This 177-nucleotide RNA was probed chemically with 2A3 and DMS. It was measured as part of the RMDB library TTRINS. For DMS the reverse transcriptase was MarathonRT. For 2A3 the reverse transcriptase was SuperScript II with manganese.
RNA sequence: GGGAACGACUCGAGUAGAGUCGAAAAGAUAUGGAAGGCAGAAGUCGCUAUGAAGCCAUGGAGGCUGGGCUAUGUCGGAAACGACAUAGCCCAGUGAAGUGGUGGAGCGACCUGCCUUCCUAAGUCAGCAUGCUUUAUAGUUCGCUAUAAAGCAUGCAAAAGAAACAACAACAACAAC
Reactivity to 2A3 in 0.01 (KOAc 150mM, MgCl2 10mM, bicine 150mM(pH8.5), 24C), signal-to-noise 2, nucleotides 027 to 126: g020a010u080a000u160g000g010a000a020g020g000c020a000g070a300a120g120u000c020g050c000u180a300u300g020a010a000g000c000c010a000u020g100g030a090g300g000c010u000g000g010g000c020u010a020u000g000u010c000g030g000a020a060a040c040g000a000c000a000u000a000g010c000c010c000a000g000u020g000a000a000g010u010g000g000u030g000g000a010g000c030g000a000c000c000u000g000c000c010u000u000c000c000u010a000a010g000u000c010a020
Reactivity to DMS in 0.01 (KOAc 150mM, MgCl2 10mM, bicine 150mM(pH8.5), 24C), signal-to-noise 2, nucleotides 027 to 126: g010a060u000a300u000g010g000a040a000g000g010c000a030g010a110a160g030u000c000g040c000u000a270u010g020a190a290g020c000c000a030u000g010g010a100g030g000c000u000g000g000g010c010u010a010u000g000u000c000g010g000a080a070a230c020g040a000c010a010u000a000g020c000c000c000a000g000u000g000a260a300g010u000g000g020u000g000g000a000g010c000g000a000c000c010u000g000c000c000u000u000c000c000u000a000a040g020u000c050a190